[RMDB]
RNA sequence: GGGAACGACUCGAGUAGAGUCGAAAACGCGGUCUCGGUCACGGUGGUCGGUUUCAUCCUGGCGCUGUUGCUGCGAGAGGUACCGCUCACCGACAUCCACGAUGACGCCGACGACCUCGGCGACGGGGCAUCAGGGUGAGUUCGCUCACCCUGAUGCAAAAGAAACAACAACAACAAC
Reactivity to DMS in 0.01 (KOAc 150mM, MgCl2 10mM, bicine 150mM(pH8.5), 24C), signal-to-noise 2, nucleotides 027 to 126: c080g030c090g000g010u000c020u000c010g010g010u000c070a130c100g020g000u000g010g010u000c000g010g000u000u000u000c020a030u010c030c020u000g020g020c050g000c020u000g020u010u000g010c110u000g060c080g020a050g000a080g000g020u010a060c140c050g010c020u000c010a050c030c020g030a270c040a040u000c010c080a100c220g010a050u000g000a110c130g000c010c000g000a030c090g000a070c050c010u000c040g000g010c060g000a070c050g010g010g020
Reactivity to 2A3 in 0.01 (KOAc 150mM, MgCl2 10mM, bicine 150mM(pH8.5), 24C), signal-to-noise 2, nucleotides 027 to 126: c040g010c040g020g000u030c010u010c020g030g000u070c030a030c080g010g010u010g030g010u000c000g000g050u020u040u110c070a100u060c030c010u040g090g000c060g000c040u140g100u300u250g010c140u100g030c050g040a080g000a020g070g070u050a050c000c040g040c040u000c010a000c000c010g070a070c010a030u030c020c040a100c150g040a050u070g010a030c040g000c030c000g010a030c090g050a010c010c020u030c030g020g020c010g050a050c030g000g000g030